[RMDB]
RNA sequence: GGGAACGACUCGAGUAGAGUCGAAAAAGCGUAGCGGUACGCCGCUACGCAAGGCGCUUUUGAACUGUAUUGUACGCCUUGCAUAAAGCAAAAGUACUAAAAAAACGUGCCGUUACGACGGCACGAAAAAACAUCCAUUGGUUCGCCAAUGGAUGAAGAUCAAUCAUGACUUCGGUCAUGAUUGAUCAAAAGAAACAACAACAACAAC
Reactivity to 2A3 in 0.01 (KOAc 150mM, MgCl2 10mM, bicine 150mM(pH8.5), 24C), signal-to-noise 2, nucleotides 027 to 156: a000g020c000g000u000a000g000c000g030g020u040a020c170g030c020c020g010c000u000a000c000g000c000a010a010g000g000c000g000c020u080u140u100u210g140a130a100c110u140g050u230a130u150u100g090u040a060c010g000c000c000u000u000g000c020a090u140a300a120a040g000c000a010a000a040a030g030u050a030c080u130a050a040a000a000a000a010a080c010g000u000g010c030c000g000u040u040a050c290g000a010c000g060g010c000a000c000g020a020a000a020a000a000a000c000a000u000c010c000a000u000u000g030g010u040u040c150g000c080c000a000a000u000g000g000a000u000g010a020a000